The data come from the RNA Mapping Database (RMDB), library TTRDES. Chemical mapping of a 177-nucleotide RNA with 2A3 and DMS. 2A3 is a SHAPE reagent: it acylates the 2'-hydroxyl of flexible nucleotides of all four kinds. DMS (dimethyl sulfate) methylates the pairing face of unpaired adenines and cytosines. For 2A3 the reverse transcriptase was SuperScript II with manganese.
RNA sequence: GGGAACGACUCGAGUAGAGUCGAAAAGAUAUGGAGUGUGGUGAUGAGCAACAGCUGACAUCGGAAACGAUGUCAGACAUGCUCGCACCCACUCCUAAGUCAAAAGCCAUGGCUUCGGCCAUGGCAAGAUUAAUCCUUGGUUCGCCAAGGAUUAAUCAAAAGAAACAACAACAACAAC
Reactivity to 2A3 in 0.01 (KOAc 150mM, MgCl2 10mM, bicine 150mM(pH8.5), 24C), signal-to-noise 5, nucleotides 027 to 126: g000a010u080a070u150g000g000a010g010u060g050u300g040g030u030g030a300u110g010a130g000c020a020a180c050a230g050c010u020g000a000c000a000u000c000g000g030a060a080a020c020g000a000u000g000u010c000a000g000a000c010a010u060g000c000u000c010g000c010a000c000c010c000a000c000u000c000c000u000a010a000g020u010c020a040a030a170a080g000c000c000a000u000g010g000c010u060u140c300g090g000c010c000a000u000g000g030c000a010a000
Reactivity to DMS in 0.01 (KOAc 150mM, MgCl2 10mM, bicine 150mM(pH8.5), 24C), signal-to-noise 6, nucleotides 027 to 126: g010a050u000a300u000g010g000a020g010u000g010u020g050g010u000g010a060u010g020a000g010c000a040a080c290a200g000c010u000g000a010c000a000u010c000g000g000a110a120a250c010g010a010u000g010u000c000a000g010a030c080a150u010g000c000u000c000g010c000a010c010c000c010a010c010u000c000c000u000a000a060g000u000c040a090a100a150a140g000c000c000a010u000g010g000c000u000u010c230g040g010c000c000a000u000g000g030c010a010a010
Reactivities are rounded to 0.1 and cut off at 0 and 3. The 2A3 profile rests on 18,741 reads.